Annotation: The data come from the RNA Mapping Database (RMDB), library OK3TST. Chemical mapping of a 207-nucleotide RNA with 2A3 and DMS. Values are in units of 0.01, from 0 to 300, in steps of 10.
RNA sequence: GGGAACGACUCGAGUAGAGUCGAAAAUUAAGUGAAAUAAGCCAGGCACAGAAAGACAAACUUCAUAUAUUCUCACUUAUUUGUGGGAGCUAAAAAUUAAACAAUUGAACUCAUGAAGAUAGAGAGUAGAGUGAUGGUUACCAGAGGUUAGGAAGGGAGUUUUACAGUAAUUCGUUACUGUAAAACUAAAAGAAACAACAACAACAAC
Reactivity to 2A3 in 0.01 (KOAc 150mM, MgCl2 10mM, bicine 150mM(pH8.5), 24C), signal-to-noise 6, nucleotides 027 to 156: u100u040a070a010g020u020g090a050a070a090u090a100a000g010c030c010a030g040g000c030a030c020a040g100a060a100a000g040a050c050a040a150a030c040u060u050c080a040u080a020u040a090u240u000c010u020c010a020c000u170u160a100u190u270u170g010u010g000g010g010a000g000c020u080a080a070a040a030a050u150u200a110a100a030c030a060a070u090u080g020a040a010c010u030c090a030u050g030a020a020g020a030u130a050g040a000g010a000g010u070a030g010a010g030u030g010a030u040g020g020u030u040a020c020c010a030g000a020g050g030u070u080a020g000g040a020a020g030g010g010
Reactivity to DMS in 0.01 (KOAc 150mM, MgCl2 10mM, bicine 150mM(pH8.5), 24C), signal-to-noise 3, nucleotides 027 to 156: u010u010a070a090g040u000g020a090a080a070u010a090a110g000c030c030a080g010g010c070a120c070a100g020a070a090a110g010a070c060a090a130a080c040u000u010c050a060u000a110u000a080u010u000c020u000c010a060c030u020u010a120u000u000u000g050u010g010g000g000a050g030c130u000a020a040a050a070a080u020u000a070a050a120c080a060a110u000u000g010a050a080c040u000c050a040u020g010a050a050g000a130u000a070g010a110g020a060g020u000a050g030a110g040u000g010a060u000g010g010u010u000a050c030c030a060g030a040g010g010u000u010a050g020g020a040a060g010g010g010
Notes: DMS adducts were read by reverse transcription with MarathonRT. Conditions: 150 mM KOAc, 10 mM MgCl2 and 150 mM bicine (pH 8.5), 24 C.